This 207-nucleotide RNA was probed chemically with DMS and 2A3. Source: RMDB library OK3TST, as collected in RNAgym. For 2A3, 6,766 sequencing reads were counted. 2A3 adducts were read by reverse transcription with SuperScript II with manganese. For DMS the reverse transcriptase was MarathonRT. The RNA was probed in 150 mM KOAc, 10 mM MgCl2 and 150 mM bicine (pH 8.5) at 24 C.
[RMDB]
RNA sequence: GGGAACGACUCGAGUAGAGUCGAAAACGCGACGCCGUCCGUGAGGAAUUCGGCAUGGAGAAGGACGAAGAGUUCGCUCGCGCCUACAAGUCCGAAGGUGUCAUCGACGAAGAAGGUCGGGAAACGACCAACAUCACGAUCGAUGGCAACGCGCUCAGAAUCAGAAAUAGUUCGCUAUUUCUGAUUCAAAAGAAACAACAACAACAAC
Reactivity to DMS in 0.01 (KOAc 150mM, MgCl2 10mM, bicine 150mM(pH8.5), 24C), signal-to-noise 4, nucleotides 027 to 156: c030g030c020g010a080c050g010c010c040g040u010c000c000g030u000g010a150g000g000a090a160u000u000c000g030g010c030a220u010g020g000a080g080a120a110g030g030a050c010g010a070a160g020a240g010u000u000c010g030c020u000c020g020c050g040c010c000u040a070c050a020a050g010u000c000c000g010a050a050g010g020u000g000u000c020a010u000c020g000a020c020g010a040a100g040a090a300g000g000u000c010g000g010g010a060a090a200c040g000a060c010c000a020a120c090a230u000c010a070c090g020a110u000c010g000a030u000g030g000c010a040a020c020g000c000g000c010u010c040a160
Reactivity to 2A3 in 0.01 (KOAc 150mM, MgCl2 10mM, bicine 150mM(pH8.5), 24C), signal-to-noise 7, nucleotides 027 to 156: c030g000c020g050a030c050g030c040c020g040u010c010c020g070u060g060a090g030g070a050a070u110u070c030g010g010c040a030u110g060g020a090g010a110a160g010g010a020c030g020a090a120g070a020g090u070u050c040g020c030u010c010g040c010g020c010c000u070a090c050a070a060g050u000c030c010g040a040a010g050g010u020g020u020c000a000u000c000g010a010c010g010a020a070g020a040a030g020g000u020c030g000g030g060a150a300a050c020g010a000c030c000a010a030c040a070u080c030a010c060g080a160u020c000g000a000u010g000g000c000a010a010c010g000c000g000c010u020c020a030